[RMDB]
RNA sequence: GGGAACGACUCGAGUAGAGUCGAAAAGCCGUUCUUGCUCGGCGUGGGCGGUCCAGGUCGUUUGUAGUGGGUGCCCAUGGAUUUCUUGCGCGUUCCGGUGCUCGAAGAGCUCAGCAAAGCACUCAUGCUGUCAUCCAGACUGUGGGGUCCGUCCUGAGGAUUUAAUGGUGUUCGCACCAUUAAAUCCAAAAGAAACAACAACAACAAC
Reactivity to 2A3 in 0.01 (KOAc 150mM, MgCl2 10mM, bicine 150mM(pH8.5), 24C), signal-to-noise 1, nucleotides 027 to 156: g000c000c000g020u070u020c170u140u150g110c160u090c050g010g000c060g040u050g000g000g020c030g000g020u040c010c010a020g010g030u000c000g040u020u020u030g030u020a050g040u050g040g020g000u000g000c020c000c000a040u070g030g000a050u030u000u020c030u050u100g000c020g000c000g110u140u130c100c070g120g000u030g020c020u030c030g020a050a040g020a000g080c040u040c100a070g030c020a040a010a000g030c000a000c000u000c000a060u220g060c050u050g120u130c000a040u090c000c040a100g000a020c040u080g160u170g300g010g000g060u060c000c010g000u010c000c000u020g000a040

An RNA of 207 nucleotides, treated with 2A3 and read out base by base. The RNA was probed in 150 mM KOAc, 10 mM MgCl2 and 150 mM bicine (pH 8.5) at 24 C. The data come from the RNA Mapping Database (RMDB), library OK3TST. Values cover nucleotides 27 to 156.